The data come from the RNA Mapping Database (RMDB), library OK3TST. Structure probing data (2A3 and DMS) for a 207-nucleotide construct.
[RMDB]
RNA sequence: GGGAACGACUCGAGUAGAGUCGAAAAAGAGAGAGACUAAGUAUCUACUGCCUUUGCUUCUACCUGGUGGCCCAAGCUACAUUUAUAUUAUCAUCAUCAGCCUCCCCCACCGGGACUUCAUCAUUAUCAUCAUCAACAACAAAGGGGAGUGGGACUGUGUUGAAAGAUCAUUCGUGAUCUUUCAACAAAAAGAAACAACAACAACAAC
Reactivity to 2A3 in 0.01 (KOAc 150mM, MgCl2 10mM, bicine 150mM(pH8.5), 24C), signal-to-noise 3, nucleotides 027 to 156: a000g100a000g010a010g040a000g010a020c050u100a130a040g080u070a130u070c020u030a030c030u090g080c020c010u050u050u060g000c020u080u030c040u050a160c000c000u010g000g020u010g000g020c020c000c020a040a000g000c020u100a050c040a220u090u230u080a200u100a080u190u160a090u170c070a050u060c020a010u040c040a040g040c000c000u000c020c000c010c000c000a000c000c000g020g010g000a000c000u150u070c040a070u020c000a020u020u210a060u150c080a000u060c000a010u040c000a010a120c000a010a020c020a010a130a030g000g000g000g010a030g010u060g010g000g010a030c020u030g010
Reactivity to DMS in 0.01 (KOAc 150mM, MgCl2 10mM, bicine 150mM(pH8.5), 24C), signal-to-noise 2, nucleotides 027 to 156: a030g020a150g020a100g010a100g000a110c080u000a050a100g020u000a110u010c040u000a060c030u000g000c010c010u020u020u000g020c030u000u010c040u000a180c050c020u000g010g020u000g030g030c050c040c030a090a140g020c050u000a100c090a060u010u000u000a080u000a120u000u010a160u010c040a080u020c080a100u000c080a150g000c010c000u000c040c010c030c010c000a050c090c010g000g040g000a080c060u000u000c030a070u010c050a060u020u000a120u000c060a050u000c050a090u000c090a060a060c070a070a050c010a010a040a080g030g000g000g000a120g040u020g010g010g040a090c070u010g020
Source information: Reactivities are rounded to 0.1 and cut off at 0 and 3. High DMS reactivity at an A or C suggests that its Watson-Crick edge is free. For 2A3 the reverse transcriptase was SuperScript II with manganese.